[RMDB]
RNA sequence: GGGAACGACUCGAGUAGAGUCGAAAACCUUCUUUCGCCACCUGUUGAGGUCUUUCUUCUGAAACAAAGAAGAAAUAGACAAAUCAGACUUGCCCUCUUGGAAAUGUGGUCCAGAUUUCUCUACUCCUAACACUAUAUCAUUCGUGAUAUAGUGUUAAAAAGAAACAACAACAACAAC
Reactivity to DMS in 0.01 (KOAc 150mM, MgCl2 10mM, bicine 150mM(pH8.5), 24C), signal-to-noise 9, nucleotides 027 to 126: c020c010u010u010c050u000u000u010c060g010c040c030a070c070c030u010g010u000u010g010a120g010g010u000c010u000u000u000c000u000u000c000u000g010a120a130a150c250a100a130a040g000a010a010g000a010a020a060u020a060g010a020c020a050a090a070u000c050a060g000a070c050u000u000g010c030c010c030u000c040u000u000g010g010a050a060a070u010g020u010g010g010u000c020c030a070g000a100u000u000u000c030u000c030u000a070c080u010c030c170
Reactivity to 2A3 in 0.01 (KOAc 150mM, MgCl2 10mM, bicine 150mM(pH8.5), 24C), signal-to-noise 9, nucleotides 027 to 126: c000c000u040u040c030u020u080u060c030g020c010c000a040c010c020u040g040u080u060g080a060g050g050u010c010u000u010u000c000u000u000c000u020g090a130a130a090c080a080a220a030g010a010a000g020a010a020a030u170a020g020a010c010a010a110a030u080c020a020g070a100c020u030u060g020c000c010c000u030c020u040u050g050g040a070a120a070u150g050u040g030g020u010c010c010a060g010a120u020u090u010c030u000c000u020a050c020u010c010c010

Source information:
An RNA of 177 nucleotides, treated with DMS and 2A3 and read out base by base. DMS adducts were read by reverse transcription with MarathonRT. The RNA was probed in 150 mM KOAc, 10 mM MgCl2 and 150 mM bicine (pH 8.5) at 24 C.